[RMDB]
RNA sequence: GGGAACGACUCGAGUAGAGUCGAAAAUAGCCAUCCGAGUAGGACGUCUGUCCUCCUACGGAUGCCCAGGUCGGACCGCGGGGAGGUGGAGAUGCCAUGCCGACCCGAAGAGGAAAGAAGAACACGGAUAGAUGUACGUUCGCGUACAUCAAAAGAAACAACAACAACAAC
Reactivity to DMS in 0.01 (KOAc 150mM, MgCl2 10mM, bicine 150mM(pH8.5), 24C), signal-to-noise 9, nucleotides 027 to 129: u050a080g060c210c020a010u030c010c000g030a020g010u010a030g000g000a020c000g010u050c250u100g010u030c020c000u000c020c010u000a110c000g000g000a010u000g010c020c000c020a090g010g020u030c030g020g020a070c040c050g000c070g000g010g010g000a000g010g010u010g030g010a090g030a050u060g030c060c040a060u030g030c060c000g010a110c070c040c040g000a080a060g010a030g000g020a030a060a040g010a030a050g000a030a050c090a060c100g020g020a070u040a100
Reactivity to 2A3 in 0.01 (KOAc 150mM, MgCl2 10mM, bicine 150mM(pH8.5), 24C), signal-to-noise 9, nucleotides 027 to 129: u140a010g060c020c010a000u000c000c000g000a000g000u020a000g000g020a010c030g180u140c260u300g020u000c000c000u010c000c000u110a160c000g000g000a000u000g000c000c000c000a040g020g020u040c020g020g020a040c000c020g000c040g030g010g000g010a020g010g010u070g030g020a090g010a040u140g070c030c010a050u100g010c010c010g020a040c000c000c020g010a050a020g020a020g020g030a050a010a000g030a010a010g010a030a010c050a020c060g040g010a040u120a130